[RMDB]
Chemical mapping of a 177-nucleotide RNA with DMS and 2A3.
For DMS the reverse transcriptase was MarathonRT.
RNA sequence: GGGAACGACUCGAGUAGAGUCGAAAAGAUAUGGACAAGCUCCGUGCUUUGAUCUCGGAAACGAGGGAGCACAGGAGAACUACUUGUCCUAAGUCAAAAGUACAUUUACGUUCGCGUAAAUGUACAACAGACUCUAUACCUUCGGGUAUAGAGUCUGAAAAGAAACAACAACAACAAC
Reactivity to DMS in 0.01 (KOAc 150mM, MgCl2 10mM, bicine 150mM(pH8.5), 24C), signal-to-noise 3, nucleotides 027 to 126: g000a060u000a300u000g010g010a000c000a020a010g050c010u000c000c010g030u000g000c000u000u020u030g000a070u010c000u000c010g000g010a090a060a210c010g010a010g000g000g020a000g020c000a010c010a100g040g010a040g010a020a030c050u010a300c020u000u000g000u000c000c010u010a020a100g000u000c020a050a060a080a100g000u010a000c000a000u000u000u000a010c000g020u000u010c220g030c020g010u000a000a020a000u000g010u000a000c010a070a150
Reactivity to 2A3 in 0.01 (KOAc 150mM, MgCl2 10mM, bicine 150mM(pH8.5), 24C), signal-to-noise 3, nucleotides 027 to 126: g010a020u090a040u150g010g000a010c010a000a010g000c010u000c000c000g020u000g010c000u300u290u130g090a150u040c000u010c000g030g040a100a070a060c020g010a010g000g010g000a010g020c020a010c040a050g000g020a010g020a020a000c040u210a020c000u010u000g000u000c000c010u020a150a030g060u050c050a030a040a010a110g010u000a010c010a010u010u000u000a010c010g020u020u070c300g000c010g120u010a020a000a000u000g010u000a000c000a000a010